[RMDB]
RNA sequence: GGGAACGACUCGAGUAGAGUCGAAAAGUUGGUGGUACAGGAUUACAGUAUGCCGCCAUUACUGCACCUUAUGUAGUUCUCACUGGCUUAGGUGAGUCCUUUAAGAAAGUUGCAACCAUACCGUAUACGAAGUAUAAACGUUCGCGUUUAUACUUCGAAAAGAAACAACAACAACAAC
Reactivity to 2A3 in 0.01 (KOAc 150mM, MgCl2 10mM, bicine 150mM(pH8.5), 24C), signal-to-noise 4, nucleotides 027 to 126: g050u020u010g020g010u020g010g020u040a050c030a080g120g080a210u150u150a070c020a030g100u100a060u090g000c000c000g010c010c000a010u010u090a030c050u010g000c010a010c010c000u020u020a070u140g160u070a030g010u020u000c010u000c010a000c020u030g140g060c110u190u250a070g020g000u010g010a010g000u010c010c000u060u090u120a120a070g080a120a060a010g060u090u020g000c000a020a020c010c010a020u060a050c020c040g060u120a040u020a120
Reactivity to DMS in 0.01 (KOAc 150mM, MgCl2 10mM, bicine 150mM(pH8.5), 24C), signal-to-noise 3, nucleotides 027 to 126: g000u010u000g010g010u000g000g020u010a090c120a100g000g000a230u010u000a030c060a050g020u010a120u010g000c000c000g010c020c010a050u010u010a090c100u010g010c040a050c080c010u000u010a080u000g010u020a070g020u000u000c000u000c010a020c020u000g020g030c260u020u020a120g020g010u000g010a050g020u000c070c010u010u000u000a090a120g010a070a070a050g010u000u000g010c030a040a150c040c030a060u000a070c060c070g010u000a040u000a190

Structure probing data (2A3 and DMS) for a 177-nucleotide construct. The 2A3 profile rests on 3,542 reads. For 2A3 the reverse transcriptase was SuperScript II with manganese. Values are in units of 0.01, from 0 to 300, in steps of 10. The RNA was probed in 150 mM KOAc, 10 mM MgCl2 and 150 mM bicine (pH 8.5) at 24 C. DMS adducts were read by reverse transcription with MarathonRT. Source: RMDB library 15KREP, as collected in RNAgym.